[RMDB]
RNA sequence: GGGAACGACUCGAGUAGAGUCGAAAAAACUCAGCUAGGGAGAGUAUAACAUUCAUGUUGACGAGACCUAGACGAAACACAGAGGAUAAUUAUUAAUCACUGGAUAGUAUUAGUAAUGACUCUGUGUAAAACUCUUCUACGUUCGCGUAGAAGAGAACAUAUCCACUGUGUUCGCACAGUGGAUAUGAAAAGAAACAACAACAACAAC
Reactivity to 2A3 in 0.01 (KOAc 150mM, MgCl2 10mM, bicine 150mM(pH8.5), 24C), signal-to-noise 7, nucleotides 027 to 156: a000a000c020u020c010a000g010c000u010a000g000g020g000a040g010a050g050u080a150u080a300a010c040a030u100u230c080a070u290g030u050u040g030a030c040g020a010g070a060c000c000u000a000g010a020c020g010a010a040a000c000a000c000a000g020a010g030g020a040u060a200a030u250u000a000u000u010a000a010u020c050a010c040u060g080g100a140u300a300g010u010a010u010u000a000g000u000a000a010u010g010a000c000u000c000u000g000u000g010u010a000a000a000a000c000u000c000u000u010c000u000a010c000g020u020u030c210g010c000g090u000a000g010a010a000g000a000g000a010a000
Reactivity to DMS in 0.01 (KOAc 150mM, MgCl2 10mM, bicine 150mM(pH8.5), 24C), signal-to-noise 3, nucleotides 027 to 156: a040a090c050u000c020a080g010c020u000a030g010g010g010a220g000a180g020u000a040u000a040a050c040a120u000u000c130a100u020g010u000u000g010a110c000g000a300g000a090c010c000u000a060g010a280c100g000a130a140a050c000a010c010a000g000a040g000g000a180u010a090a050u000u000a010u000u000a000a010u000c100a080c070u010g010g020a140u010a090g030u000a040u000u000a010g010u010a000a000u000g000a120c000u000c020u000g020u000g020u000a010a020a000a130c000u000c000u000u000c000u000a000c000g000u000u000c300g030c010g030u000a000g000a020a000g000a010g020a050a090
Conditions: 150 mM KOAc, 10 mM MgCl2 and 150 mM bicine (pH 8.5), 24 C. This 207-nucleotide RNA was probed chemically with 2A3 and DMS. For DMS, 7,483 sequencing reads were counted. For DMS the reverse transcriptase was MarathonRT.